[RMDB]
RNA sequence: GGGAACGACUCGAGUAGAGUCGAAAACGGUGUUCGCUGGGCAUAUUAGUCAGUACAGGAGGGAGCCUACUGAAGCGCGCACGGUAGGCAUCGAUCUCCGUACUGAAUUUAUGCCUGUGCUGAAGCGCGCACGGCAACCGAAAGGUGCGGAGCAAGAGCAUAAAGGAAACUUCGGUUUCCUUUAUGCAAAAGAAACAACAACAACAAC
Reactivity to DMS in 0.01 (KOAc 150mM, MgCl2 10mM, bicine 150mM(pH8.5), 24C), signal-to-noise 1, nucleotides 027 to 156: c060g010g060u000g010u000u010c000g050c000u000g010g000g000c000a030u000a010u000u000a100g030u000c000a000g030u000a040c020a150g020g000a060g000g020g010a060g020c010c000u000a040c000u010g000a020a030g030c020g040c010g030c000a300c030g020g050u000a010g020g000c010a160u020c050g000a030u020c050u000c000c010g030u000a020c000u010g000a030a020u000u000u000a000u010g000c000c000u000g010u000g030c040u000g020a020a050g060c000g030c010g000c000a300c060g000g000c020a080a060c020c010g010a150a150a170g040g010u010g010c040g000g000a050g000c020a100a070g000a300
Reactivity to 2A3 in 0.01 (KOAc 150mM, MgCl2 10mM, bicine 150mM(pH8.5), 24C), signal-to-noise 3, nucleotides 027 to 156: c060g050g040u090g060u070u040c020g000c000u020g010g000g010c020a000u010a020u080u110a150g150u050c000a000g000u010a010c040a170g010g000a010g000g000g020a000g000c000c000u000a000c000u040g060a240a080g000c010g000c000g000c000a010c010g010g000u010a000g000g030c010a030u300c010g010a000u000c020u000c000c000g010u000a000c000u000g000a000a020u010u000u000a000u000g000c000c010u000g010u000g000c000u010g020a150a070g010c000g000c000g000c020a010c010g010g000c010a010a010c010c000g040a040a010a010g010g000u020g010c030g060g010a030g020c050a090a030g090a060
The record gives the reactivity of an RNA of 207 nucleotides to DMS and 2A3. The RNA was probed in 150 mM KOAc, 10 mM MgCl2 and 150 mM bicine (pH 8.5) at 24 C. The data come from the RNA Mapping Database (RMDB), library RNAMAK. For 2A3, 5,509 sequencing reads were counted. DMS adducts were read by reverse transcription with MarathonRT. For DMS, 3,439 sequencing reads were counted.